This 177-nucleotide RNA was probed chemically with 2A3. The data come from the RNA Mapping Database (RMDB), library OK1LIB.
RNA sequence: GGGAACGACUCGAGUAGAGUCGAAAAGGAGACUAACGUCUCACGAUUUGGGAUGUAUUGUAUAGCAUCCUGACGUACACCAUCGACACACGUCGGACUCGACGAGAGUUGAGUGUAGACUCAACCGCGCCGUCUGAUGCUUCGGCAUCAGACGGCGAAAAGAAACAACAACAACAAC
Reactivity to 2A3 in 0.01 (KOAc 150mM, MgCl2 10mM, bicine 150mM(pH8.5), 24C), signal-to-noise 2, nucleotides 027 to 126: g170g000a010g060a000c120u220a240a090c220g000u010c010u000c000a000c000g120a090u200u130u080g010g000g000a010u000g000u140a240u210u260g220u000a110u240a110g030c000a000u030c000c000u020g000a040c010g010u120a040c020a000c100c000a080u110c000g070a020c000a000c000a000c140g070u060c090g110g150a210c040u010c130g040a090c000g010a030g010a000g130u000u000g000a000g090u030g020u120a120g130a150c000u090c000a000a100c000c000g170
Values are in units of 0.01, from 0 to 300, in steps of 10. 2A3 adducts were read by reverse transcription with SuperScript II with manganese. The reactions ran in a buffer of 150 mM KOAc, 10 mM MgCl2 and 150 mM bicine (pH 8.5), at 24 C.